[RMDB]
RNA sequence: GGGAACGACUCGAGUAGAGUCGAAAAAAAAAGAGCGUAAUCGCGUCAUAGAGUGACGUGAAGAUCAUCCAAGUGUGCUGUCUACAGUCGUAGAUAGCGCACAAUACGCUGAUGAUCAUUCAAAAAACGUGAGACAAAUCUUCGGAUUUGUCUCACGAAAAGAAACAACAACAACAAC
Reactivity to 2A3 in 0.01 (KOAc 150mM, MgCl2 10mM, bicine 150mM(pH8.5), 24C), signal-to-noise 1, nucleotides 027 to 126: a010a000a000a010a000g150a020g000c060g060u100a070a030u000c010g000c000g000u000c030a010u070a050g300a060g220u050g010a000c010g040u010g040a040a040g000a010u000c000a000u000c040c020a220a150g000u000g000u020g010c030u000g010u020c000u000a040c030a300g250u280c160g000u140a020g000a010u000a000g000c020g000c000a000c010a000a000u030a010c030g000c110u020g000a000u000g000a000u000c060a070u180u230c150a060a070a070a000a050a000
Annotation:
Chemical mapping of a 177-nucleotide RNA with 2A3. For 2A3 the reverse transcriptase was SuperScript II with manganese.